Notes:
Conditions: 150 mM KOAc, 10 mM MgCl2 and 150 mM bicine (pH 8.5), 24 C. Structure probing data (2A3 and DMS) for a 177-nucleotide construct. For 2A3, 1,238 sequencing reads were counted. Source: RMDB library M2PK50, as collected in RNAgym.
RNA sequence: GGGAACGACUCGAGUAGAGUCGAAAAAGCUCCUGUUUCGACAGGAGCUGUGUGGCUGCCCUUAUGUGCUCGAUGUAGAGUGCUUUCCUGCCGGAAAGGGCUUGAGAGCUUGAUUCGUCAAGCUCAAUUCGGGGAUAUGAUUCGUCAUAUCCCCGAAAAAAGAAACAACAACAACAAC
Reactivity to 2A3 in 0.01 (KOAc 150mM, MgCl2 10mM, bicine 150mM(pH8.5), 24C), signal-to-noise 1, nucleotides 027 to 126: a000g000c000u000c000c000u010g010u010u060u070c240g130a010c000a010g000g020a000g000c010u000g000u000g010u030g090g060c090u080g000c000c010c020u000u150a070u050g050u030g010c000u000c010g080a090u260g060u260a130g010a020g020u030g050c000u020u040u030c000c010u030g090c070c000g000g000a120a020a000g040g000g000c000u040u090g180a140g000a000g020c000u030u020g000a040u080u000c130g020u000c110a000a000g000c000u010c030a010a020
Reactivity to DMS in 0.01 (KOAc 150mM, MgCl2 10mM, bicine 150mM(pH8.5), 24C), signal-to-noise 3, nucleotides 027 to 126: a030g010c000u000c000c010u000g010u000u000u020c150g000a030c010a000g000g000a010g020c000u010g010u000g020u000g010g020c110u010g010c010c000c010u000u000a040u010g030u010g010c000u010c010g010a190u010g020u010a140g020a020g010u000g000c030u000u000u000c000c000u010g010c110c060g010g010a040a040a040g010g010g010c020u010u010g000a200g000a010g010c010u000u000g000a030u000u010c180g010u000c000a000a000g010c000u000c010a030a080